An RNA of 207 nucleotides, treated with 2A3 and DMS and read out base by base. The reactions ran in a buffer of 150 mM KOAc, 10 mM MgCl2 and 150 mM bicine (pH 8.5), at 24 C. Source: RMDB library ARCHII, as collected in RNAgym. DMS adducts were read by reverse transcription with MarathonRT.
[RMDB]
RNA sequence: GGGAACGACUCGAGUAGAGUCGAAAAAGGCUUGCAAAAUACCGUCAUUUAUCUGGUUGGAACUUACUUUCUCUAAUUCUCAAGGAAGUUCGUUCGAGAUUUUUGAGAGUCAUUGGCUGCUAUAGAGGCUUCUAGCUAAGGGAGUCCAAUGUAAACACAUGAAAAGAUUCUUCGGAAUCUUUUCAUGAAAAGAAACAACAACAACAAC
Reactivity to 2A3 in 0.01 (KOAc 150mM, MgCl2 10mM, bicine 150mM(pH8.5), 24C), signal-to-noise 2, nucleotides 027 to 156: a060g020g000c020u040u070g040c080a010a050a010a190u060a050c020c020g110u030c030a030u090u050u100a070u060c070u080g070g060u080u050g080g020a030a000c000u020u020a000c010u000u100u000c020u000c010u010a080a230u230u030c010u020c090a050a000g000g020a010a030g010u020u010c050g010u040u010c070g040a020g010a090u040u100u050u210u100g040a040g020a020g050u060c020a030u040u040g030g030c020u060g000c020u150a040u070a260g160a100g080g010c000u200u120c110u110a040g000c070u080a030a130g020g040g000a040g010u000c050c000a000a040u050g000u050a080a100a010c030a000
Reactivity to DMS in 0.01 (KOAc 150mM, MgCl2 10mM, bicine 150mM(pH8.5), 24C), signal-to-noise 1, nucleotides 027 to 156: a140g050g030c030u000u000g040c060a080a010a130a120u010a060c020c020g010u030c020a080u000u000u010a020u010c040u010g020g000u010u000g010g000a040a020c010u000u000a060c010u000u000u010c010u010c010u000a040a080u000u000c020u000c040a070a060g000g000a020a030g020u000u000c110g020u000u000c040g020a150g000a030u030u000u020u020u000g000a100g000a040g030u000c130a170u000u000g000g020c080u020g000c000u000a170u030a150g020a130g050g000c020u010u000c080u000a070g030c180u040a070a120g000g030g000a040g000u000c000c010a020a110u010g010u000a070a070a080c060a100